RNA sequence: GGGAACGACUCGAGUAGAGUCGAAAAGCGGCUGCCGGUGCGGUGGCGCCAAAUUGCAUCGCCCGCAGCGCUGCUGCUGACACUGCUGCUGCUAGCGUGCUGCGGCCCUGCCUGGCGAGGCAGUCACCCUAUUAGAAAAUUUCGAUUUUCUAAUAGGAAAAGAAACAACAACAACAAC
Reactivity to 2A3 in 0.01 (KOAc 150mM, MgCl2 10mM, bicine 150mM(pH8.5), 24C), signal-to-noise 3, nucleotides 027 to 126: g060c080g040g010c010u010g000c020c010g060g090u190g040c030g030g050u040g040g030c010g000c010c000a050a090a040u180u160g000c010a020u110c060g000c010c010c020g000c000a000g000c020g000c050u080g000c020u040g000c030u070g040a080c030a030c140u190g020c050u080g010c010u030g010c040u080a010g000c000g010u020g000c010u000g010c020g010g000c000c020c000u020g010c000c010u040g070g020c020g020a060g000g000c000a000g010u010c010a050c010
Reactivity to DMS in 0.01 (KOAc 150mM, MgCl2 10mM, bicine 150mM(pH8.5), 24C), signal-to-noise 9, nucleotides 027 to 126: g020c090g020g020c000u000g020c010c040g030g020u010g030c060g020g030u000g010g020c210g010c040c060a030a110a150u010u010g010c020a030u000c030g010c060c010c300g000c010a010g010c040g010c040u000g020c050u000g010c050u010g000a090c060a130c110u000g010c060u010g010c050u000g000c030u000a060g020c020g020u000g000c000u000g000c120g000g000c020c080c010u000g000c020c130u010g000g010c030g010a190g010g010c010a030g010u000c050a100c120